[RMDB]
RNA sequence: GGGAACGACUCGAGUAGAGUCGAAAAGGGACUGGCCCGAUGAAGCCCGGCAACCUAACUUUAUUUAAGCGCAAAGUGAAGGUGCUAAUUCCAGCAAAAUGGUGUAUUCCGUUUUGGUAGAUAAGAGAAGCGUGACAUGAGUUCGCUCAUGUCACAAGUAGGUGAUAGACUUCGGUCUAUCACCUACAAAAGAAACAACAACAACAAC
Reactivity to 2A3 in 0.01 (KOAc 150mM, MgCl2 10mM, bicine 150mM(pH8.5), 24C), signal-to-noise 3, nucleotides 027 to 156: g030g000g000a020c050u020g060g040c010c000c000g010a040u060g080a070a010g010c000c000c000g000g000c030a110a090c000c000u030a020a030c010u070u080u100a170u100u300u160a180a030g100c090g000c120a020a020a020g000u030g120a140a020g000g000u010g020c000u000a030a060u140u030c000c000a020g060c060a080a020a000a030u000g020g050u070g030u180a120u150u030c000c010g030u030u000u030u000g050g030u100a130g070a230u150a160a100g060a010g090a140a020g150c030g070u000g000a000c000a000u000g000a000g030u030u120c170g050c070u000c000a020u000g000u000c000a000c000a000a010
Reactivity to DMS in 0.01 (KOAc 150mM, MgCl2 10mM, bicine 150mM(pH8.5), 24C), signal-to-noise 1, nucleotides 027 to 156: g000g010g030a100c040u010g010g020c000c010c000g010a200u010g030a170a130g000c030c030c010g000g010c020a080a090c020c010u000a100a080c020u010u010u010a060u020u000u000a040a140g000c100g000c070a080a040a100g030u030g010a060a110g000g020u000g020c000u000a040a080u010u000c030c000a030g050c020a010a020a020a020u010g000g010u010g020u020a070u000u000c010c010g000u000u010u000u010g060g000u010a010g010a070u010a070a110g000a120g010a100a180g010c080g030u000g000a020c010a020u010g020a020g000u010u010c300g000c020u000c010a020u000g000u000c010a000c020a000a090
Structure probing data (2A3 and DMS) for a 207-nucleotide construct. The data come from the RNA Mapping Database (RMDB), library M2RFPK. The DMS profile rests on 2,568 reads. The reactions ran in a buffer of 150 mM KOAc, 10 mM MgCl2 and 150 mM bicine (pH 8.5), at 24 C. High 2A3 reactivity points to a flexible backbone, as in loops and unpaired stretches.